Chemical mapping of a 207-nucleotide RNA with 2A3. Source: RMDB library M2RFPK, as collected in RNAgym. Conditions: 150 mM KOAc, 10 mM MgCl2 and 150 mM bicine (pH 8.5), 24 C. 2A3 adducts were read by reverse transcription with SuperScript II with manganese. Values cover nucleotides 27 to 156.

[RMDB]
RNA sequence: GGGAACGACUCGAGUAGAGUCGAAAAAUGUGCGGCAAUGAAACAUUGUUUAUGCAAAGGCACUUCGCAAUGUGUGCUCAAACAUUGCUUAUUCAAACACGCUUCACAAUGUGCGACAAAGAAACAUAAAACGUUUAGUACUUCGGUACUAAACGAACCACCAGUGGUUCUUCGGAACCACUGGUGGAAAAGAAACAACAACAACAAC
Reactivity to 2A3 in 0.01 (KOAc 150mM, MgCl2 10mM, bicine 150mM(pH8.5), 24C), signal-to-noise 2, nucleotides 027 to 156: a000u120g010u090g030c010g000g000c010a020a020u040g040a070a180a030c040a070u040u010g020u000u150u070a110u150g030c020a030a030a050g080g000c010a000c010u040u030c010g020c040a040a010u030g000u000g010u030g010c060u110c220a010a020a030c030a020u000u000g010c000u040u070a140u050u100c130a020a100a000c070a020c030g060c030u080u080c040a000c010a120a110u080g000u000g050c020g060a010c040a020a100a030g090a020a120a000c030a030u170a080a170a000a000c000g000u030u000u000a020g000u000a000c010u030u020c170g040g000u010a000c030u000a000a000a000c000g000a000a010